Notes
Source: RMDB library M2PK50, as collected in RNAgym. An RNA of 177 nucleotides, treated with 2A3 and DMS and read out base by base. The reactions ran in a buffer of 150 mM KOAc, 10 mM MgCl2 and 150 mM bicine (pH 8.5), at 24 C. For DMS, 13,392 sequencing reads were counted.
[RMDB]
RNA sequence: GGGAACGACUCGAGUAGAGUCGAAAAUGUGUCUCCUUCGGGAGACACAAACGCUCGCAGCCCGAGGCCGCACGGGCAAGGCAGCGGGCAGCCAGCGAGCUAUGUGUUAUCAAUUCGUUGAUAACAAAGGUAUCUAAAUUUUCGAAUUUAGAUACCUAAAAGAAACAACAACAACAAC
Reactivity to 2A3 in 0.01 (KOAc 150mM, MgCl2 10mM, bicine 150mM(pH8.5), 24C), signal-to-noise 4, nucleotides 027 to 126: u050g000u010g000u000c000u010c010c010u020u080c160g070g000g000a000g000a000c000a010c000a000a000a000c030g000c000u000c000g000c010a010g000c000c010c010g010a010g020g000c010c010g050c040a120c150g120g130g010c060a050a070g010g000c000a020g020c000g000g000g000c010a010g080c030c020a010g000c000g010a010g000c010u060a130u140g140u000g000u010u000a000u000c010a020a020u070u070c190g050u080u030g010a010u000a000a000c000a030a120
Reactivity to DMS in 0.01 (KOAc 150mM, MgCl2 10mM, bicine 150mM(pH8.5), 24C), signal-to-noise 7, nucleotides 027 to 126: u000g010u000g000u000c000u000c000c000u000u010c210g030g010g010a010g010a000c010a000c000a010a060a070c190g010c000u000c050g040c000a180g000c000c000c000g010a040g000g010c000c010g010c100a140c110g000g000g010c080a070a070g000g000c010a020g020c000g000g000g020c010a040g010c070c080a140g010c000g000a010g010c020u000a050u010g010u000g000u000u000a010u000c000a010a050u000u010c190g010u000u000g010a010u000a010a010c000a050a120
2A3 adducts were read by reverse transcription with SuperScript II with manganese.